The data come from the RNA Mapping Database (RMDB), library M2RFPK. Structure probing data (2A3) for a 207-nucleotide construct. For 2A3, 1,134 sequencing reads were counted.
RNA sequence: GGGAACGACUCGAGUAGAGUCGAAAAACACGUAGGGCGAGGGGUGGGCGAAAGUUGCCAUGAGACCGUAACUUUCGUAGUCAUUGAUAAAGGGGCAGGUCUCGCUCUUUGGUCAUUGCGGUUGCCUAAAACUGUGGUUCGUUCGCGAACCACAGAACUACUAGCUCUAGUUCGCUAGAGCUAGUAGAAAAGAAACAACAACAACAAC
Reactivity to 2A3 in 0.01 (KOAc 150mM, MgCl2 10mM, bicine 150mM(pH8.5), 24C), signal-to-noise 2, nucleotides 027 to 156: a010c110a000c070g030u100a100g000g010g050c210g080a190g000g040g010g090u230g070g000g000c000g000a000a000a000g000u000u010g020c020c020a140u130g020a010g000a100c000c030g010u010a000a010c010u000u040u010c050g010u020a020g090u050c070a070u010u240g090a020u140a070a060a060g050g000g010g070c040a000g000g040u000c010u050c010g000c000u110c020u110u050u050g090g000u050c040a060u040u100g030c020g040g000u050u050g020c000c000u060a100a090a090a100c000u000g000u000g000g010u000u000c010g020u040u050c240g000c000g140a000a000c020c010a020c020a000g000a000a000